[RMDB]
RNA sequence: GGGAACGACUCGAGUAGAGUCGAAAACGACGUUGGCCGUGAGCGUGGUCGGCUUGAAGAAGGUCACGGGGUUAAGGUUGAAGAUGAGCUUCCGCACGUUGGACUGUCCAUGCAGCAGCGCAUUAUAGACCUUGGAGAUGGGUGCGGUCUCCGAGUAGCUAAGACUGGUAUUCGUACCAGUCUUAGCAAAAGAAACAACAACAACAAC
Reactivity to 2A3 in 0.01 (KOAc 150mM, MgCl2 10mM, bicine 150mM(pH8.5), 24C), signal-to-noise 3, nucleotides 027 to 156: c000g130a000c050g010u010u060g030g010c020c000g040u030g050a050g040c050g020u030g010g070u010c040g020g040c050u120u120g090a110a090g040a070a050g040g060u090c030a000c050g040g000g020g000u080u120a050a000g030g050u050u040g080a070a010g040a090u050g020a010g010c030u070u010c020c010g020c000a040c050g050u020u080g020g040a080c050u100g050u030c010c030a020u070g000c010a000g000c010a020g010c010g000c020a030u030u040a060u110a060g050a000c000c000u030u060g020g000a080g010a020u070g040g080g000u030g010c020g000g020u000c010u000c010c010g020a010g050u110a020
Reactivity to DMS in 0.01 (KOAc 150mM, MgCl2 10mM, bicine 150mM(pH8.5), 24C), signal-to-noise 1, nucleotides 027 to 156: c000g020a080c090g000u010u000g010g020c010c020g020u000g020a080g040c030g050u000g050g050u020c010g100g000c070u000u000g000a150a100g010a080a130g040g030u010c030a050c000g000g000g030g010u000u000a080a040g000g010u000u000g050a160a240g040a040u000g010a030g000c050u000u000c010c000g030c060a040c090g020u000u000g050g030a080c080u000g000u020c040c050a140u000g030c040a070g010c050a080g000c010g020c020a020u000u010a080u000a300g010a050c050c010u000u000g020g020a070g030a090u000g020g030g010u020g000c060g010g020u000c020u030c000c010g020a070g010u010a120